Record summary
The record gives the reactivity of an RNA of 177 nucleotides to DMS and 2A3.

RNA sequence: GGGAACGACUCGAGUAGAGUCGAAAAGAUAUGGAAUGGUGAGAGAAGCGACGACUAUUCGGAAACGAACGAAUCGUCGAACUACUUUGGUACCAUUCCUAAGUCAAAAGCUCUGUUCGCAGAGCAACGGACAAAGAAUCUUCGGAUUCUUUGUCCGAAAAGAAACAACAACAACAAC
Reactivity to DMS in 0.01 (KOAc 150mM, MgCl2 10mM, bicine 150mM(pH8.5), 24C), signal-to-noise 1, nucleotides 027 to 126: g000a060u000a300u020g000g000a000a010u000g000g000u000g010a150g000a180g000a100a020g000c000g000a080c020g000a000c040u000a300u000u000c010g020g000a060a070a100c010g010a010a020c160g000a060a040u000c000g000u000c000g000a080a060c120u000a250c010u020u000u000g000g030u010a110c000c000a050u000u000c000c030u000a030a080g000u000c040a020a080a120a080g020c010u000c010u010g010u000u040c130g000c010a010g000a000g010c010a030a030
Reactivity to 2A3 in 0.01 (KOAc 150mM, MgCl2 10mM, bicine 150mM(pH8.5), 24C), signal-to-noise 1, nucleotides 027 to 126: g020a040u050a050u100g000g010a010a010u010g010g030u040g000a120g000a000g020a190a010g090c020g120a110c000g000a010c080u010a050u030u000c030g050g040a120a120a100c040g030a030a000c020g030a070a300u000c010g030u000c000g000a050a010c000u080a030c010u090u010u040g150g050u180a010c000c000a000u010u010c000c010u010a070a040g030u030c020a000a020a080a160g010c000u000c000u000g010u070u120c270g000c070a000g000a020g000c000a000a000